[RMDB]
Record summary
Structure probing data (DMS) for a 177-nucleotide construct. For DMS the reverse transcriptase was MarathonRT. Values cover nucleotides 27 to 126.
RNA sequence: GGGAACGACUCGAGUAGAGUCGAAAAGUGAACAGACCGGUAAGAGCGCCGAUCAAGCUGGUGGCGACCAGUUUCUGCAGAACUGGAUCAACGAUGCGGGACAACUUGCGUUGCAGCAACUCGAUGAACACAUAGUUGGCUUCGGCCAACUAUGUGUAAAAGAAACAACAACAACAAC
Reactivity to DMS in 0.01 (KOAc 150mM, MgCl2 10mM, bicine 150mM(pH8.5), 24C), signal-to-noise 1, nucleotides 027 to 126: g010u000g000a050a140c080a070g010a050c010c030g000g000u000a090a070g000a070g000c100g020c080c040g040a070u000c100a050a200g030c030u020g000g010u010g000g020c170g010a120c020c000a000g000u000u000u000c020u010g040c100a200g000a070a040c120u010g000g010a130u000c020a040a130c130g010a070u000g000c100g070g000g000a050c100a020a060c100u000u000g010c130g000u000u000g000c060a070g000c110a120a070c070u000c070g000a140u010g010a080